[RMDB]
RNA sequence: GGGAACGACUCGAGUAGAGUCGAAAAGAUAUGGAGUUCUCGGCGGACACUUGGACCCAGGCUCGGAAACGAGCCUGGCUAGUGUGCGCCGAGAGACUCCUAAGUCAAAGAUGGGUUCGCCCAUCAAGACUAUCCUUUUGUUCGCAAAAGGAUAGUCAAAAGAAACAACAACAACAAC
Reactivity to DMS in 0.01 (KOAc 150mM, MgCl2 10mM, bicine 150mM(pH8.5), 24C), signal-to-noise 4, nucleotides 027 to 126: g000a070u010a300u010g000g000a030g000u010u000c000u010c010g010g020c000g010g000a020c000a010c000u000u010g020g000a170c300c010c000a010g010g040c010u000c000g010g000a130a110a220c010g010a010g010c000c000u000g000g030c020u000a010g000u000g010u000g000c000g000c020c000g000a000g010a010g000a010c000u000c000c000u000a030a080g020u010c060a160a150a210g000a020u000g000g010g010u010u020c290g010c000c000c000a000u000c010a080a120
Reactivity to 2A3 in 0.01 (KOAc 150mM, MgCl2 10mM, bicine 150mM(pH8.5), 24C), signal-to-noise 3, nucleotides 027 to 126: g040a010u120a050u240g010g010a010g010u020u000c000u000c010g000g000c020g080g190a010c000a010c030u140u200g090g140a160c030c020c020a000g000g000c000u000c000g010g040a080a120a080c020g010a000g000c020c000u000g000g000c010u000a000g000u000g000u090g110c010g000c010c000g010a000g000a000g000a000c000u000c000c000u010a100a040g040u000c060a100a060a120g010a000u010g030g010g030u110u110c300g170c020c000c010a010u010c000a000a000